[RMDB]
RNA sequence: GGGAACGACUCGAGUAGAGUCGAAAACAUGGUUCGCCAUGAAAUCGUCCUAAGUCAACCGAUGAGGACUGGGAGAUCUUUUGACGUCGUGUCGGAAACGACACGACGAUAAGAUUCAGUCCGAGGUUGAUAUGGAGUGCACCUCAUUCGUGAGGAAAUAUGUUUAGGCUUUCGAGCCUAAACAUAUAAAAGAAACAACAACAACAAC
Reactivity to 2A3 in 0.01 (KOAc 150mM, MgCl2 10mM, bicine 150mM(pH8.5), 24C), signal-to-noise 2, nucleotides 027 to 156: c010a010u000g010g010u070u070c240g040c070c010a010u040g070a100a110a040u190c130g080u000c020c000u020a110a020g010u000c000a010a000c000c020g210a300u210g130a120g040g010a010c000u020g030g040g050a280g000a040u000c000u030u150u060u180g120a120c050g000u000c000g020u000g000u000c030g000g080a170a090a150c020g010a010c000a000c000g010a000c000g010a000u000a020a000g000a000u160u160c000a000g000u000c000c000g000a010g000g000u000u000g000a000u000a050u070g010g020a040g050u150g090c060a050c020c000u000c010a060u090u150c250g120u050g020a030g000g000a070a080
Reactivity to DMS in 0.01 (KOAc 150mM, MgCl2 10mM, bicine 150mM(pH8.5), 24C), signal-to-noise 2, nucleotides 027 to 156: c000a040u000g010g030u010u000c300g050c020c000a020u010g000a050a090a100u010c010g010u000c000c000u000a080a270g020u000c030a020a010c010c010g030a230u000g010a300g020g010a010c070u040g000g030g030a300g010a000u000c000u030u000u000u000g040a180c150g020u010c000g130u000g000u050c000g090g050a130a150a240c000g030a070c010a010c000g000a060c000g010a030u000a020a010g000a050u000u000c000a040g000u000c010c000g000a050g000g050u010u000g020a030u000a060u000g020g030a110g010u000g010c030a220c010c010u010c000a170u010u000c200g030u000g010a010g000g020a150a060

Record summary
An RNA of 207 nucleotides, treated with 2A3 and DMS and read out base by base. As a SHAPE reagent, 2A3 marks flexible, mostly unpaired nucleotides at the ribose 2'-OH. Conditions: 150 mM KOAc, 10 mM MgCl2 and 150 mM bicine (pH 8.5), 24 C. It was measured as part of the RMDB library RNAMAK.